[RMDB]
RNA sequence: GGGAACGACUCGAGUAGAGUCGAAAAGUUUAGAAGUUCGCUUCUAAACAAAUAGAUGGUACCUAUCAAGCUUAUAUGUAGGUACCCAUGUAAGGUUGACAAAAACGUCCUCGUUCGCGAGGACGAAGACCUACUAAAUCUUCGGAUUUAGUAGGUCAAAAGAAACAACAACAACAAC
Reactivity to DMS in 0.01 (KOAc 150mM, MgCl2 10mM, bicine 150mM(pH8.5), 24C), signal-to-noise 2, nucleotides 027 to 126: g010u010u000u000a000g020a010a010g040u000u010c300g020c010u000u000c000u010a000a010a000c000a050a100a110u010a090g040a060u000g010g010u000a010c010c010u000a010u010c090a030a100g000c270u010u030a080u000a040u000g010u000a000g000g020u000a020c100c010c110a010u000g010u010a040a070g010g010u010u000g000a130c070a090a040a030a080a100c030g000u000c010c000u000c000g050u000u000c230g020c000g020a010g000g010a010c010g000a030a060
Reactivity to 2A3 in 0.01 (KOAc 150mM, MgCl2 10mM, bicine 150mM(pH8.5), 24C), signal-to-noise 2, nucleotides 027 to 126: g010u000u000u000a020g010a020a000g010u020u110c230g010c130u020u000c000u010a000a010a000c000a000a170a010u120a030g110a050u070g000g000u000a010c000c000u040a020u210c110a060a010g080c070u300u200a090u070a040u300g020u020a000g000g000u000a010c020c020c000a030u120g070u130a030a070g100g070u080u110g080a100c090a040a100a010a010a020c010g020u000c000c000u010c000g040u040u030c200g010c030g080a020g040g000a000c000g000a010a010
Structure probing data (DMS and 2A3) for a 177-nucleotide construct.
The 2A3 profile rests on 1,586 reads.
Conditions: 150 mM KOAc, 10 mM MgCl2 and 150 mM bicine (pH 8.5), 24 C.